[RMDB]
RNA sequence: GGGAACGACUCGAGUAGAGUCGAAAAAUGGUAGUUAGUCUACUCGCUAUCCUAGUUACUUUGGAGUAAUCUAAAGUGUGUGUAAACGGGCGAAAGUCUGUAAAAUACUGGGGACCUAGGGUCAACAAGAACUAGUAGACCUUCGGGUCUACUAGAAGAGUUCCUAUAACUUCGGUUAUAGGAACUCAAAAGAAACAACAACAACAAC
Reactivity to DMS in 0.01 (KOAc 150mM, MgCl2 10mM, bicine 150mM(pH8.5), 24C), signal-to-noise 2, nucleotides 027 to 156: a140u000g000g020u000a040g040u010u020a210g000u000c010u020a070c020u000c040g060c120u030a140u000c010c000u000a060g010u000u000a040c010u000u010u000g020g020a070g000u010a130a170u000c000u000a010a000a020g010u000g000u030g000u000g020u010a050a160a060c030g060g010g000c010g000a160a060a270g020u000c020u000g010u000a050a100a080a170u000a010c020u000g010g020g000g010a080c110c020u000a070g000g020g010u000c050a090a080c060a080a130g010a050a230c000u010a010g020u010a000g000a020c000c020u000u020c300g070g020g000u000c020u000a020c000u000a010g020a020a100
Reactivity to 2A3 in 0.01 (KOAc 150mM, MgCl2 10mM, bicine 150mM(pH8.5), 24C), signal-to-noise 2, nucleotides 027 to 156: a000u110g030g020u040a050g030u150u040a110g040u050c010u010a010c010u030c040g010c100u080a070u100c000c000u040a040g040u020u070a040c010u010u010u030g010g000a000g030u110a070a120u000c000u000a010a050a010g000u020g000u030g000u010g010u050a120a110a000c010g010g000g000c030g010a070a020a010g020u010c010u000g020u040a000a160a030a000u110a040c040u040g010g010g010g050a000c010c020u020a020g110g000g040u060c020a010a030c030a210a000g090a070a020c000u000a010g000u000a000g010a000c010c000u020u040c110g050g020g000u000c000u010a000c000u000a000g010a030a000